[RMDB]
This 177-nucleotide RNA was probed chemically with 2A3 and DMS.
RNA sequence: GGGAACGACUCGAGUAGAGUCGAAAAGUAUGUAUGGAUAACCAUACGUACAAAUAAUUGCCUCAUGGUGGUGGCUGGGGGCACCCUCAUCGUGGUGGGUGUGGAAAAUAAAGAUCCGAAAGGAUCAGGAUAGCAUGAUGUUCGCAUCAUGCUAUCCAAAAGAAACAACAACAACAAC
Reactivity to 2A3 in 0.01 (KOAc 150mM, MgCl2 10mM, bicine 150mM(pH8.5), 24C), signal-to-noise 3, nucleotides 027 to 126: g000u000a000u000g000u000a000u010g010g050a210u090a280a240c010c000a000u000a000c000g000u000a000c000a000a080a000u230a000a050u110u120g050c010c000u060c010a030u100g050g000u040g050g000u030g020g000c080u010g020g000g000g000g020c000a010c000c040c020u030c070a120u070c060g100u060g110g040u040g010g000g020u020g000u020g030g040a010a040a040a000u210a020a080a010g010a000u000c000c000g030a020a020a000g000g000a000u000c000a000
Reactivity to DMS in 0.01 (KOAc 150mM, MgCl2 10mM, bicine 150mM(pH8.5), 24C), signal-to-noise 2, nucleotides 027 to 126: g020u000a000u000g000u000a010u020g000g010a250u040a130a220c040c000a030u010a000c000g010u000a000c000a020a110a060u030a020a060u010u020g000c010c000u000c070a040u000g000g000u010g010g030u020g000g000c060u000g020g070g000g000g000c020a030c030c000c030u040c090a060u030c090g000u020g010g020u000g000g020g000u000g000u000g050g000a090a070a020a040u100a030a080a030g000a000u000c000c000g000a070a010a130g000g000a020u010c010a020
For 2A3 the reverse transcriptase was SuperScript II with manganese. For 2A3, 3,057 sequencing reads were counted. The RNA was probed in 150 mM KOAc, 10 mM MgCl2 and 150 mM bicine (pH 8.5) at 24 C.